[RMDB]
RNA sequence: GGGAACGACUCGAGUAGAGUCGAAAAGGCCAGCCGAGCACGGCUGGCGAAUUGCGCAGGCUGAUCUCGCCUUCCAGGCCCUGGCUCGCGGCCGCGAAGGCGGCGAGCUGUUCCUCGGUGCGCGGGAACGCCUCAGGGCGUUCGCGCCCUGAGGCGUAAAAGAAACAACAACAACAAC
Reactivity to DMS in 0.01 (KOAc 150mM, MgCl2 10mM, bicine 150mM(pH8.5), 24C), signal-to-noise 1, nucleotides 027 to 126: g000g010c010c010a010g040c010c000g020a230g030c300a130c060g040g020c010u020g020g000c010g010a020a020u000u010g040c080g010c100a020g010g010c030u050g000a150u000c050u000c040g020c010c010u010u000c050c010a160g000g000c130c010c040u000g000g010c050u020c040g010c100g020g020c000c010g000c260g000a060a100g010g020c000g010g000c040g000a020g010c000u000g000u000u000c020c010u000c040g000g030u000g040c140g010c000g000g010g010a070

An RNA of 177 nucleotides, treated with DMS and read out base by base. DMS (dimethyl sulfate) methylates the pairing face of unpaired adenines and cytosines. The RNA was probed in 150 mM KOAc, 10 mM MgCl2 and 150 mM bicine (pH 8.5) at 24 C.